[RMDB]
RNA sequence: GGGAACGACUCGAGUAGAGUCGAAAAGGUAAUCCGUUGGGCGGCACCUGGAUUGCGCCGCGGGUAACGCCUUCGCCGGGCAGUUGCCGAUCCGGCCAGCGGUGCUGUAGCGGGCGGCCCUGUAGCCCUCCCCGUAAUUAUUCGUAAUUACGGGGAGAAAAGAAACAACAACAACAAC
Reactivity to DMS in 0.01 (KOAc 150mM, MgCl2 10mM, bicine 150mM(pH8.5), 24C), signal-to-noise 8, nucleotides 027 to 126: g000g010u000a120a060u010c010c010g020u000u000g010g010g040c010g000g000c020a010c020c020u010g030g010a150u010u000g010c160g030c000c000g030c170g020g000g000u000a010a020c030g000c010c010u000u000c300g000c210c260g010g000g010c000a070g020u000u000g000c010c010g010a100u010c200c020g000g000c010c020a050g010c060g000g000u000g000c000u000g020u000a070g000c030g010g010g010c300g010g000c070c000c020u000g010u010a190g000c020c030
Reactivity to 2A3 in 0.01 (KOAc 150mM, MgCl2 10mM, bicine 150mM(pH8.5), 24C), signal-to-noise 5, nucleotides 027 to 126: g020g000u030a030a030u040c020c020g020u080u080g190g160g060c010g000g030c020a030c020c030u120g200g080a300u080u110g000c090g000c040c000g010c120g040g020g010u010a020a000c000g000c010c000u150u130c090g080c110c050g000g000g000c060a160g020u030u020g000c000c020g010a110u060c030c010g000g000c010c000a020g000c020g050g000u010g000c010u020g020u040a030g030c000g010g010g000c010g030g000c020c020c000u060g120u120a080g030c000c010
Structure probing data (DMS and 2A3) for a 177-nucleotide construct. Reactivities are given for positions 27 through 126. The reactions ran in a buffer of 150 mM KOAc, 10 mM MgCl2 and 150 mM bicine (pH 8.5), at 24 C. High DMS reactivity at an A or C suggests that its Watson-Crick edge is free.